The data come from the RNA Mapping Database (RMDB), library TTRDEL.
Chemical mapping of a 177-nucleotide RNA with DMS and 2A3.
Values cover nucleotides 27 to 126.
High 2A3 reactivity points to a flexible backbone, as in loops and unpaired stretches.
The 2A3 profile rests on 3,159 reads.
2A3 adducts were read by reverse transcription with SuperScript II with manganese.
RNA sequence: GGGAACGACUCGAGUAGAGUCGAAAAGAUAUGGACCGUUAUGAACUACUGCCCGUCGGAAACGACGGAAGCAGCAUACGGUCCUAAGUCAAAGUGCCCAUUUCCAGUUCGCUGGAAAUGGGCACAAGUAACCACAUAACUUCGGUUAUGUGGUUACAAAAGAAACAACAACAACAAC
Reactivity to DMS in 0.01 (KOAc 150mM, MgCl2 10mM, bicine 150mM(pH8.5), 24C), signal-to-noise 2, nucleotides 027 to 126: g000a080u000a300u000g000g000a010c000c000g020u000u000a000u000g000a050a090c050u010a300c010u000g010c030c000c000g020u000c000g010g000a160a100a160c010g010a010c000g010g000a100a030g020c020a010g000c000a010u000a000c010g020g000u000c000c000u000a000a060g020u000c040a070a070a160g000u010g020c020c000c000a020u000u000u000c020c000a000g030u000u010c270g000c000u000g000g010a000a000a000u020g040g010g000c020a000c000a010a040
Reactivity to 2A3 in 0.01 (KOAc 150mM, MgCl2 10mM, bicine 150mM(pH8.5), 24C), signal-to-noise 2, nucleotides 027 to 126: g020a030u050a050u150g000g020a000c020c010g020u200u070a020u020g050a040a070c060u300a060c010u300g030c040c000c000g020u000c000g000g050a160a050a070c010g000a000c000g030g000a030a020g020c000a010g030c010a010u020a010c000g000g000u000c000c000u000a020a000g010u010c040a030a110a060g000u010g020c010c010c000a000u000u000u000c010c000a010g040u030u090c170g160c160u060g000g000a000a000a000u010g000g000g010c000a010c000a000a000

Background:
DMS adducts were read by reverse transcription with MarathonRT.